[RMDB]
The record gives the reactivity of an RNA of 177 nucleotides to DMS.
DMS adducts were read by reverse transcription with MarathonRT.

RNA sequence: GGGAACGACUCGAGUAGAGUCGAAAAGAUAUGGAGUGAGCGAUAAGAUGUGUGUCGGAAACGACACCCAUCUUUUGACGCUCCCUCCUAAGUCAAAGUUAAUACCGGCUUCGGCCGGUAUUAACAACAUUGCCAGAUGGUUCGCCAUCUGGCAAUGAAAAGAAACAACAACAACAAC
Reactivity to DMS in 0.01 (KOAc 150mM, MgCl2 10mM, bicine 150mM(pH8.5), 24C), signal-to-noise 2, nucleotides 027 to 126: g020a040u030a300u000g000g010a010g010u000g000a000g040c000g020a180u000a050a030g000a000u000g000u010g010u000g000u000c000g000g010a070a020a120c000g010a010c020a010c000c040c010a010u010c000u000u000u000u000g020a150c070g000c000u000c000c040c000u000c000c000u020a010a070g020u010c010a080a090a150g000u000u000a010a010u000a010c000c010g010g010c000u000u000c240g020g000c000c020g000g010u000a000u000u000a000a000c000a150a200